[RMDB]
RNA sequence: GGGAACGACUCGAGUAGAGUCGAAAACUGUUGAGCCGCCCGGCUAUUAAUGCUUCUGAGCGAAUCACCGCAACAGUCAGUGAAAUCCUUGACCGGGUGAAAGCCGAGGGCGACAGCGCCUUGCGUGGUAUAAGUGGACUUUCGAGUCCACUUAUACAAAAGAAACAACAACAACAAC
Reactivity to 2A3 in 0.01 (KOAc 150mM, MgCl2 10mM, bicine 150mM(pH8.5), 24C), signal-to-noise 3, nucleotides 027 to 126: c010u000g030u050u070g140a090g080c000c030g120c050c040c000g030g020c030u030a090u050u210a110a120u190g000c010u090u150c100u230g160a040g010c010g040a050a080u100c030a020c090c000g020c050a070a110c010a100g030u030c000a010g000u030g090a140a080a050u120c050c000u070u080g010a030c020c000g060g030g000u010g040a070a030a000g020c020c020g020a070g000g020g000c010g000a020c010a020g050c030g060c010c040u080u200g060c070g110u110g060
Reactivity to DMS in 0.01 (KOAc 150mM, MgCl2 10mM, bicine 150mM(pH8.5), 24C), signal-to-noise 5, nucleotides 027 to 126: c030u000g010u000u000g010a210g050c030c010g000c020c030c010g000g020c010u000a100u010u010a120a100u010g010c010u000u010c200u010g010a080g030c020g000a140a160u000c030a040c050c010g010c090a090a220c090a050g010u010c040a020g000u010g000a110a110a150u010c200c030u010u010g010a040c040c050g020g000g030u010g000a020a110a100g000c000c010g010a060g010g000g010c010g000a020c050a090g000c060g010c030c020u000u000g030c100g020u000g020